This 177-nucleotide RNA was probed chemically with DMS and 2A3. DMS adducts were read by reverse transcription with MarathonRT.
[RMDB]
RNA sequence: GGGAACGACUCGAGUAGAGUCGAAAACAGGCACCGAGUAAGUGUAUCGGAGCAAGCAUGACCAGAGUAGAGCCAGAGACAUACGUGGGUCAAAAGUGGGGCGUAAAGCAAGGACGGUCCAAGGGUGCAUAUGUUUUCACUUCGGUGAAAACAUAUGAAAAGAAACAACAACAACAAC
Reactivity to DMS in 0.01 (KOAc 150mM, MgCl2 10mM, bicine 150mM(pH8.5), 24C), signal-to-noise 3, nucleotides 027 to 126: c080a070g000g020c020a060c010c010g000a080g010u000a060a130g040u010g030u000a070u000c060g020g000a080g010c060a090a100g010c080a100u010g010a070c060c010a040g000a070g010u010a050g010a090g030c020c030a080g030a100g010a090c070a110u000a050c080g040u020g000g010g010u000c050a040a020a030a070g040u000g000g000g000g000c080g010u010a030a090a050g000c050a050a060g000g010a100c100g000g000u000c040c060a060a080g000g010g000u000g020
Reactivity to 2A3 in 0.01 (KOAc 150mM, MgCl2 10mM, bicine 150mM(pH8.5), 24C), signal-to-noise 2, nucleotides 027 to 126: c020a030g100g000c020a010c030c030g000a030g090u160a200a060g050u080g060u220a060u050c000g000g000a020g020c010a030a010g030c020a050u100g020a050c010c040a040g020a010g120u070a030g030a000g080c030c010a050g020a000g000a100c000a040u150a050c060g070u040g020g050g010u050c000a120a000a000a030g110u110g020g000g020g000c020g020u040a090a080a000g030c010a000a070g060g020a030c040g020g030u000c030c050a040a040g070g010g010u050g010
The reactions ran in a buffer of 150 mM KOAc, 10 mM MgCl2 and 150 mM bicine (pH 8.5), at 24 C.